[RMDB]
RNA sequence: GGGAACGACUCGAGUAGAGUCGAAAAGAUAUGGACGUUGGUGAGCAACAGCGCAAUUCGGAAACGAAUUGCGACAUGCUUAAACCGGGCGUCCUAAGUCAAAACGAUGCAUGUUCGCAUGCAUCGACAUACCUCUGAGCUUCGGCUCAGAGGUAUGAAAAGAAACAACAACAACAAC
Reactivity to DMS in 0.01 (KOAc 150mM, MgCl2 10mM, bicine 150mM(pH8.5), 24C), signal-to-noise 3, nucleotides 027 to 126: g000a040u000a300u010g000g010a000c020g040u000u010g010g000u020g000a040g030c000a060a100c280a130g020c000g020c000a010a020u000u000c000g010g000a110a090a220c000g020a000a000u000u000g000c000g010a020c090a130u000g000c010u000u000a050a190a060c020c020g010g000g000c000g000u000c000c000u030a020a070g010u000c030a070a140a130a200c050g020a020u000g000c020a020u000g020u000u020c210g010c010a010u000g010c020a000u000c010g030a120
Reactivity to 2A3 in 0.01 (KOAc 150mM, MgCl2 10mM, bicine 150mM(pH8.5), 24C), signal-to-noise 3, nucleotides 027 to 126: g020a020u100a030u150g010g000a000c010g030u050u070g020g010u060g030a190g080c030a060a300c090a250g080c000g000c010a000a020u010u000c020g000g000a050a070a040c010g000a000a000u010u000g000c010g010a000c000a020u110g000c010u090u140a180a060a050c020c030g040g100g020c000g010u000c000c000u040a070a010g030u000c040a000a020a090a070c020g000a000u000g020c000a010u000g030u080u140c300g050c170a020u000g000c000a010u000c000g010a000